[RMDB]
RNA sequence: GGGAACGACUCGAGUAGAGUCGAAAAAGUGCACUAGGUACGCCUAGUGCACAUUCCAGGACAUGCUGCUGAGGAUGUCAAAAAUGCAGUUGGAGUCCUCAACUGGAUAGGCUACGGCCUAUCCAGAAAAAGACUUGGUUGUUCGCAACCAAGUCAAGUAUUGAAAGCAGUUCGCUGCUUUCAAUACAAAAGAAACAACAACAACAAC
Reactivity to DMS in 0.01 (KOAc 150mM, MgCl2 10mM, bicine 150mM(pH8.5), 24C), signal-to-noise 1, nucleotides 027 to 156: a220g030u000g020c000a010c030u000a020g000g020u020a080c300g070c010c000u000a010g060u000g000c000a000c000a020u000u010c000c010a170g000g020a150c150a190u000g010c040u000g000c040u000g020a080g010g030a080u000g010u010c060a010a030a090a130a040u010g050c110a130g000u000u000g020g010a160g020u000c010c000u010c020a060a230c000u020g020g010a030u000a010g020g000c010u000a110c220g040g010c000c000u000a010u010c030c000a020g000a010a040a030a130a070g020a030c000u000u000g000g010u000u000g000u000u010c300g000c020a020a040c010c000a020a020g000u000c000a000a070
Reactivity to 2A3 in 0.01 (KOAc 150mM, MgCl2 10mM, bicine 150mM(pH8.5), 24C), signal-to-noise 1, nucleotides 027 to 156: a000g010u000g000c000a000c010u000a000g010g030u030a000c170g120c030c000u000a000g000u010g030c000a000c000a000u000u030c000c000a010g000g020a020c020a030u150g020c000u010g010c020u040g030a090g140g100a270u280g300u300c090a050a040a050a030a000u160g010c000a000g010u060u100g090g060a120g030u000c010c020u010c020a020a140c010u010g000g010a010u020a010g000g000c050u030a040c300g070g000c010c000u010a000u000c000c000a000g000a010a000a000a000a000g000a000c000u000u000g000g020u020u020g000u060u080c150g010c090a000a000c000c010a000a000g010u000c000a000a020

Description: This 207-nucleotide RNA was probed chemically with DMS and 2A3. The RNA was probed in 150 mM KOAc, 10 mM MgCl2 and 150 mM bicine (pH 8.5) at 24 C. For 2A3 the reverse transcriptase was SuperScript II with manganese. For 2A3, 1,186 sequencing reads were counted. It was measured as part of the RMDB library M2RFPK.